[RMDB]
RNA sequence: GGGAACGACUCGAGUAGAGUCGAAAAUCGCACGUUGACAGUAUUCGAUCUUCCUACCGGAAUCGAGGUAGUAGAUGUCAUGCCCAUGGUGGUCAGUGCGCUUUCGGAAGCCAUCAGCCGCAAUAUGCGGUAAGAAGACAUUCGUGUCUUCUUACCGAAAAGAAACAACAACAACAAC
Reactivity to DMS in 0.01 (KOAc 150mM, MgCl2 10mM, bicine 150mM(pH8.5), 24C), signal-to-noise 9, nucleotides 027 to 126: u010c040g010c040a040c060g010u000u000g010a040c030a060g010u000a100u000u000c040g000a050u000c100u010u000c110c010u010a090c260c150g010g010a070a100u010c080g000a060g010g020u000a050g010u000a060g010a080u000g010u000c040a070u010g000c020c010c010a130u010g020g020u000g010g010u000c080a100g010u000g000c040g000c150u000u000u000c110g010g010a120a150g000c020c010a030u000c030a110g010c040c050g010c140a070a090u010a060u010g010
Reactivity to 2A3 in 0.01 (KOAc 150mM, MgCl2 10mM, bicine 150mM(pH8.5), 24C), signal-to-noise 9, nucleotides 027 to 126: u050c010g000c010a020c040g040u030u080g040a020c010a040g080u080a140u080u100c030g040a040u020c060u050u040c030c000u020a130c020c050g040g080a080a110u140c060g020a070g020g050u080a040g040u030a030g030a130u050g020u030c020a030u070g030c010c010c010a070u110g050g020u060g010g020u060c050a050g010u010g020c020g010c010u070u090u080c060g060g040a040a010g020c000c000a020u020c030a020g040c020c020g040c050a070a080u130a140u300g090

The data come from the RNA Mapping Database (RMDB), library OK2TST.
This 177-nucleotide RNA was probed chemically with DMS and 2A3.
For DMS the reverse transcriptase was MarathonRT.
For DMS, 27,921 sequencing reads were counted.
The 2A3 profile rests on 35,268 reads.
The reactions ran in a buffer of 150 mM KOAc, 10 mM MgCl2 and 150 mM bicine (pH 8.5), at 24 C.